RNA sequence: GGGAACGACUCGAGUAGAGUCGAAAAUAGUUUGUGACGGAGUAUGCCCAGAGCAGUGUGGAAGAUGAUCAAAGUAUGACAUUUCUUCUACCCCAGAGGCUGGCAUUUCUGCAGGCACAAAUGAGCUUGGUUUUCAAGCACUGCUCUUUGAACACAACCUAUAAAUGGGUUUCGACCCAUUUAUAGGAAAAGAAACAACAACAACAAC
Reactivity to DMS in 0.01 (KOAc 150mM, MgCl2 10mM, bicine 150mM(pH8.5), 24C), signal-to-noise 3, nucleotides 027 to 156: u000a130g030u000u000u000g010u010g010a170c050g000g010a240g030u000a070u000g020c030c000c040a060g000a060g000c000a040g010u010g040u000g020g010a080a100g020a050u000g020a120u000c020a050a070a170g010u010a190u000g020a150c040a110u020u000u000c030u000u000c020u010a050c000c040c030c050a180g020a100g010g010c030u020g000g020c060a130u000u010u000c010u000g060c040a070g000g000c020a060c070a020a040a060u000g000a100g010c030u000u010g020g020u000u000u000u010c030a040a140g000c020a070c040u010g000c000u000c010u000u030u000g020a070a070c050a050c040a050a230
Reactivity to 2A3 in 0.01 (KOAc 150mM, MgCl2 10mM, bicine 150mM(pH8.5), 24C), signal-to-noise 6, nucleotides 027 to 156: u090a020g050u010u010u030g030u020g010a030c030g060g000a040g050u080a030u070g020c030c030c030a010g000a000g010c040a010g010u030g000u020g030g010a010a010g000a020u040g030a100u040c030a110a150a130g220u200a220u160g020a010c010a040u100u100u000c000u010u000c010u020a040c000c010c000c030a070g050a060g150g000c030u030g030g000c030a020u050u150u040c050u080g050c050a080g080g000c010a000c020a050a070a050u110g020a020g020c010u030u030g020g040u200u090u110u240c020a030a000g000c000a010c020u020g030c000u000c000u040u080u110g080a120a020c040a000c010a040a070